[RMDB]
RNA sequence: GGGAACGACUCGAGUAGAGUCGAAAAGAGUUUGUGGAGAAUUACUUUGAGAUGCCGGAUGAGGACAUGGACGUGAACCGCAUGUCGCCCUGGCUGCUGCGCAUCGAGCUCAACCGCGACAUGAUGGAUCAAAGGGGUUCUUCGGAACCCCUUUGAUAAAAGAAACAACAACAACAAC
Reactivity to DMS in 0.01 (KOAc 150mM, MgCl2 10mM, bicine 150mM(pH8.5), 24C), signal-to-noise 1, nucleotides 027 to 126: g010a090g010u000u000u000g040u010g000g010a190g010a040a090u010u000a100c060u010u000u000g000a120g000a110u000g000c040c000g030g000a070u020g000a090g000g010a100c050a040u000g030g000a120c100g040u000g010a060a160c080c050g010c030a000u000g000u000c010g020c040c130c110u010g000g000c010u000g020c040u040g020c100g000c090a080u010c050g000a110g010c000u000c040a050a070c080c060g000c020g030a030c030a030u000g000a060u010g000g020

This 177-nucleotide RNA was probed chemically with DMS. In probing experiments dimethyl sulfate is read out at A N1 and C N3, which are open when not base-paired. For DMS, 1,075 sequencing reads were counted.